[RMDB]
RNA sequence: GGGAACGACUCGAGUAGAGUCGAAAAGAUAUGGAGCUUGUGGCAAGGAAAGUAUCGGAAACGAUACCUCUUCUGAUGACCCAUUGGCUCCUAAGUCAAAAGCAUUCGUCCUUCGGGACGAAUGCAACUUCUAUUAAGAGUUCGCUCUUAAUAGAAGAAAAGAAACAACAACAACAAC
Reactivity to DMS in 0.01 (KOAc 150mM, MgCl2 10mM, bicine 150mM(pH8.5), 24C), signal-to-noise 3, nucleotides 027 to 126: g010a020u000a030u020g000g000a010g020c000u000u000g010u000g000g000c000a070a020g010g010a010a030a170g000u000a000u010c000g020g010a010a030a040c000g010a020u000a010c130c300u010c250u000u000c010u000g000a060u010g010a020c300c000c000a000u000u000g000g010c010u000c010c000u000a000a060g000u010c000a060a100a120a160g010c010a010u000u000c000g000u010c010c010u000u020c270g010g000g000a010c010g020a010a000u000g000c000a020a040
Reactivity to 2A3 in 0.01 (KOAc 150mM, MgCl2 10mM, bicine 150mM(pH8.5), 24C), signal-to-noise 2, nucleotides 027 to 126: g000a000u020a020u080g000g000a000g010c020u030u030g030u020g020g000c080a170a210g030g000a010a030a020g010u000a000u000c010g000g000a010a020a010c000g000a010u010a010c000c040u250c200u070u000c020u030g300a300u060g010a010c020c000c000a020u020u040g020g000c000u000c000c000u000a000a000g000u010c010a050a040a110a150g000c000a000u000u010c010g000u030c040c000u060u180c300g090g010g000a000c000g000a000a010u010g000c000a000a000

The record gives the reactivity of an RNA of 177 nucleotides to DMS and 2A3. High 2A3 reactivity points to a flexible backbone, as in loops and unpaired stretches. The data come from the RNA Mapping Database (RMDB), library TTRDES. The 2A3 profile rests on 10,880 reads. The reactions ran in a buffer of 150 mM KOAc, 10 mM MgCl2 and 150 mM bicine (pH 8.5), at 24 C. The DMS profile rests on 4,488 reads.